The record gives the reactivity of an RNA of 207 nucleotides to DMS and 2A3.
RNA sequence: GGGAACGACUCGAGUAGAGUCGAAAAUCGGAACAGAAUGAAAGGCGGUGGUCUUUGUCUAAUCUUAUCUUAGAAAGGAGGUGAUUACACACAAUGAGUUUUUUUCAAUCUUUAGGUUCAAGCGAAGUAUCAUACGAUUCUUACAUCGAUUCAAUUGUAAAGUCCAUACGUUCGCGUAUGGACUUUAAAAAGAAACAACAACAACAAC
Reactivity to DMS in 0.01 (KOAc 150mM, MgCl2 10mM, bicine 150mM(pH8.5), 24C), signal-to-noise 2, nucleotides 027 to 156: u000c080g020g020a090a190c070a120g000a120a120u010g000a070a080a130g050g040c060g010g000u010g000g080u000c030u000u000u020g010u000c010u000a050a130u010c030u000u020a120u010c100u030u000a110g010a100a090a140g020g000a090g030g020u000g000a080u000u000a070c090a100c020a140c070a040a150u000g000a140g020u000u010u000u050u000u000u000c040a020a070u020c050u020u010u000a060g030g000u000u010c050a040a130g040c060g020a040a040g000u000a050u000c030a090u000a080c040g010a110u000u000c030u000u000a090c050a110u000c030g000a130u000u000c030a060a190u010u010g000
Reactivity to 2A3 in 0.01 (KOAc 150mM, MgCl2 10mM, bicine 150mM(pH8.5), 24C), signal-to-noise 1, nucleotides 027 to 156: u110c040g030g000a060a000c000a070g120a120a100u080g000a060a030a040g080g010c060g020g010u100g030g000u010c030u070u030u000g030u030c020u080a030a050u010c020u090u150a070u060c000u020u060a060g080a060a050a030g010g030a020g080g020u040g030a010u050u160a000c010a000c000a000c000a030a080u060g020a030g040u000u000u000u020u070u110u110c030a030a060u010c030u010u100u020a080g000g030u040u050c060a010a000g030c000g010a030a010g060u090a040u080c050a000u070a080c030g060a020u060u110c000u060u090a030c000a090u060c020g000a030u040u110c020a080a040u180u040g090
About this RNA: It was measured as part of the RMDB library OK3TST. The DMS profile rests on 2,534 reads. The reactions ran in a buffer of 150 mM KOAc, 10 mM MgCl2 and 150 mM bicine (pH 8.5), at 24 C. As a SHAPE reagent, 2A3 marks flexible, mostly unpaired nucleotides at the ribose 2'-OH.